[RMDB]
RNA sequence: GGGAACGACUCGAGUAGAGUCGAAAAAAGUGGAUGAUCCUAUGCUGUCGAGAAAAGCCUCUAGCGAGUUUCAUGGCGGCCCGUACCCUAAACCGACUCAGGUGGUCAGGUAGAGAAUACCGAGGCGCAGUAUGCAAUCAUUCGUGAUUGCAUACUGAAAAGAAACAACAACAACAAC
Reactivity to DMS in 0.01 (KOAc 150mM, MgCl2 10mM, bicine 150mM(pH8.5), 24C), signal-to-noise 5, nucleotides 027 to 126: a060a080g020u010g020g010a080u000g010a070u000c030c030u000a090u000g010c040u000g010u000c060g000a120g020a080a100a100a120g010c060c020u010c050u000a090g030c040g010a070g000u000u000u000c040a090u000g000g000c040g010g010c020c030c020g000u010a050c040c020c030u010a050a090a080c080c020g000a080c050u010c060a100g020g010u000g000g010u000c040a050g010g010u000a030g010a130g010a080a060u000a050c050c030g020a070g010g000c090g010
Reactivity to 2A3 in 0.01 (KOAc 150mM, MgCl2 10mM, bicine 150mM(pH8.5), 24C), signal-to-noise 3, nucleotides 027 to 126: a000a000g130u110g060g020a080u060g010a030u040c000c010u030a050u100g000c020u030g030u090c030g010a010g060a190a140a000a010g060c010c020u010c050u080a060g060c040g070a030g050u080u030u100c040a020u080g020g020c000g010g000c000c020c020g010u060a060c000c000c020u030a130a050a010c030c010g040a030c040u040c110a030g010g090u030g060g000u030c040a050g040g010u030a030g030a020g040a160a020u040a090c010c020g010a060g030g010c070g000